Source: RMDB library OK2TRN, as collected in RNAgym. This 177-nucleotide RNA was probed chemically with DMS and 2A3. For DMS, 2,052 sequencing reads were counted. Reactivities are given for positions 27 through 126. For 2A3 the reverse transcriptase was SuperScript II with manganese.

[RMDB]
RNA sequence: GGGAACGACUCGAGUAGAGUCGAAAAGAUCUAGUCUAGCUAGCACGCGACAUGUAUACGUACCAUGGCUAGGGUACCUGAUCCGUGGUACGUGCGGAUCGCACGAUCAGAGGUACCAUGCUAGGGACACUGUGGGUGACUUCGGUCACCCACAGUGAAAAGAAACAACAACAACAAC
Reactivity to DMS in 0.01 (KOAc 150mM, MgCl2 10mM, bicine 150mM(pH8.5), 24C), signal-to-noise 3, nucleotides 027 to 126: g010a100u000c040u000a060g010u000c030u010a060g000c000u010a080g050c070a120c070g020c040g020a080c120a100u010g020u000a120u010a060c060g040u010a030c010c030a030u000g030g010c090u000a080g000g010g010u000a040c070c000u000g010a080u000c030c040g040u010g000g000u000a020c060g030u000g000c080g000g000a150u000c010g020c040a110c100g030a080u000c050a110g010a100g010g020u000a050c010c050a180u000g000c030u000a040g000g000g000a150
Reactivity to 2A3 in 0.01 (KOAc 150mM, MgCl2 10mM, bicine 150mM(pH8.5), 24C), signal-to-noise 2, nucleotides 027 to 126: g040a030u050c010u030a030g130u000c020u020a020g050c020u020a020g040c070a010c040g070c030g070a060c030a040u190g100u100a270u030a140c040g000u010a030c000c010a050u050g050g020c040u040a050g030g000g050u070a090c010c010u040g050a080u020c030c020g040u010g000g000u050a070c000g020u020g010c020g090g010a110u020c030g010c040a050c080g070a030u100c060a000g060a020g090g000u050a000c000c000a000u110g000c010u030a050g000g010g090a000